[RMDB]
RNA sequence: GGGAACGACUCGAGUAGAGUCGAAAACAUCUGCAACAAGAUCCAGACGUGUGAGGCAGAGGUACUUCUGACGAGUUCUAGAAUCUUAAUGAGAGGAGGAGGGAAGGUCAAUCAGAUCUUCCGGAUACAUGCCUGAGGGAUUCGUCCCUCAGGCAUGAAAAGAAACAACAACAACAAC
Reactivity to DMS in 0.01 (KOAc 150mM, MgCl2 10mM, bicine 150mM(pH8.5), 24C), signal-to-noise 2, nucleotides 027 to 126: c080a090u000c020u010g020c070a090a050c190a070a050g000a060u000c020c020a030g010a060c010g010u010g020u010g000a170g000g010c040a020g020a030g020g060u000a050c050u010u010c020u000g060a080c070g000a100g020u020u000c030u000a010g010a110a070u000c030u010u000a020a140u000g000a080g010a100g000g010a050g000g010a150g000g020g000a030a040g010g040u000c010a120a090u020c230a090g010a000u000c010u000u000c000c020g070g000a140u000a140
Reactivity to 2A3 in 0.01 (KOAc 150mM, MgCl2 10mM, bicine 150mM(pH8.5), 24C), signal-to-noise 1, nucleotides 027 to 126: c040a070u030c030u050g070c010a000a010c040a030a170g050a070u000c010c050a020g050a060c030g120u160g050u030g130a100g090g000c070a020g010a050g050g010u080a130c030u120u070c010u030g100a020c010g060a030g130u070u000c070u090a090g070a060a060u040c010u110u120a160a090u200g030a060g000a030g040g110a050g010g050a040g030g030g000a000a010g040g000u010c020a050a150u140c030a060g000a000u010c000u040u000c070c000g000g010a060u060a030
The record gives the reactivity of an RNA of 177 nucleotides to DMS and 2A3. For 2A3, 1,109 sequencing reads were counted. Conditions: 150 mM KOAc, 10 mM MgCl2 and 150 mM bicine (pH 8.5), 24 C. For DMS the reverse transcriptase was MarathonRT.